The data come from the RNA Mapping Database (RMDB), library OK2TRN.
This 177-nucleotide RNA was probed chemically with DMS.
Values are in units of 0.01, from 0 to 300, in steps of 10.
The reactions ran in a buffer of 150 mM KOAc, 10 mM MgCl2 and 150 mM bicine (pH 8.5), at 24 C.
For DMS, 1,544 sequencing reads were counted.
Reactivities are given for positions 27 through 126.
[RMDB]
RNA sequence: GGGAACGACUCGAGUAGAGUCGAAAAGAAAGGGACCCCUGCCAGGGGAGCGUCGGUCAGCACCCCACGCAUAUUUUUUUAUGCCGCUGACACCCCUCGACGCGGCAGGAGGGGUGGUCCCGAAAGAGGUACUAAUGGUGUUCGCACCAUUAGUACCAAAAGAAACAACAACAACAAC
Reactivity to DMS in 0.01 (KOAc 150mM, MgCl2 10mM, bicine 150mM(pH8.5), 24C), signal-to-noise 2, nucleotides 027 to 126: g010a060a140a220g010g000g010a030c000c000c000c010u010g000c000c020a130g060g020g000g020a150g030c010g010u000c030g010g000u000c010a020g020c030a140c130c010c000c010a160c190g000c010a010u010a000u000u000u060u040u010u010u000a010u010g000c000c150g000c020u010g000a040c000a270c040c010c030c050u010c030g000a040c080g000c000g000g030c040a010g000g010a080g040g010g010g000u010g010g010u000c000c010c010g010a030a100a070g020a170